[RMDB]
RNA sequence: GGGAACGACUCGAGUAGAGUCGAAAAAAGCUAAAAGAAUCUGGUGUUAAAGUUAAAUCUCCUUUAUCCAAAAUUCAAGAUUUCCAUUGUGAGGCAGAUUUUUCUAUUGAGAUUGAAAAUAGAGUAGCUUAUGUAGAUGCAACAUUUACUUUUGAUAAUGAUUCGUAAAAUUCGUUUUACGAAUCAUAAAAGAAACAACAACAACAAC
Reactivity to DMS in 0.01 (KOAc 150mM, MgCl2 10mM, bicine 150mM(pH8.5), 24C), signal-to-noise 2, nucleotides 027 to 156: a090a080g000c010u000a060a070a110a290g000a070a060u000c020u000g020g030u020g020u020u000a030a070a140g020u010u000a050a060a070u010c050u010c050c010u010u010u000a060u010c080c020a050a040a110a080u010u010c050a110a120g020a120u000u010u010c020c020a170u000u010g040u000g020a040g020g030c040a050g000a060u000u000u000u000u000c010u000a060u000u020g010a100g010a140u000u020g000a090a090a030a070u000a040g020a130g020u000a070g020c020u000u000a060u010g000u010a100g020a080u000g020c050a060a050c050a050u000u000u000a040c020u000u000u000u000g000a180u000a110
Reactivity to 2A3 in 0.01 (KOAc 150mM, MgCl2 10mM, bicine 150mM(pH8.5), 24C), signal-to-noise 1, nucleotides 027 to 156: a000a000g030c040u080a120a090a000a050g060a060a020u050c040u040g000g010u050g100u120u020a080a130a060g020u030u090a130a150a210u010c050u050c020c000u040u020u070a080u130c050c010a020a040a120a060u200u160c050a030a000g030a140u110u080u010c060c000a020u060u060g010u050g100a020g000g000c040a010g000a020u070u040u000u110u090c060u070a100u050u110g050a100g050a130u080u160g050a020a070a000a000u030a020g030a000g090u040a040g000c020u050u070a030u120g000u010a010g030a090u050g020c040a070a050c000a090u030u120u140a110c000u060u110u110u070g020a050u030a120